[RMDB]
RNA sequence: GGGAACGACUCGAGUAGAGUCGAAAAUAAAAUUGGCUAAAGAAGGUGUGAGUGUUAAAGAGAUUACAGCCACUAAAAAAGGACUAAAUUCUUUACCCAGAAAUAAUAGGAAAGAUGGCAUGAGGGCGAACGUAGGAGAGUUCGCUCUCCUACGUUCAAAAGAAACAACAACAACAAC
Reactivity to DMS in 0.01 (KOAc 150mM, MgCl2 10mM, bicine 150mM(pH8.5), 24C), signal-to-noise 2, nucleotides 027 to 126: u000a060a080a090a120u000u000g000g020c070u000a050a050a080g010a070a080g020g020u000g010u010g020a060g020u000g020u000u010a020a060a090g020a080g000a090u000u010a070c160a090g030c030c020a020c070u010a000a060a050a130a030a040g010g000a050c050u000a060a100a140u000u000c020u000u000u000a050c080c010c030a090g000a050a060a050u000a050a060u000a050g000g000a020a020a050g010a070u000g000g030c040a030u000g010a050g000g000g020c130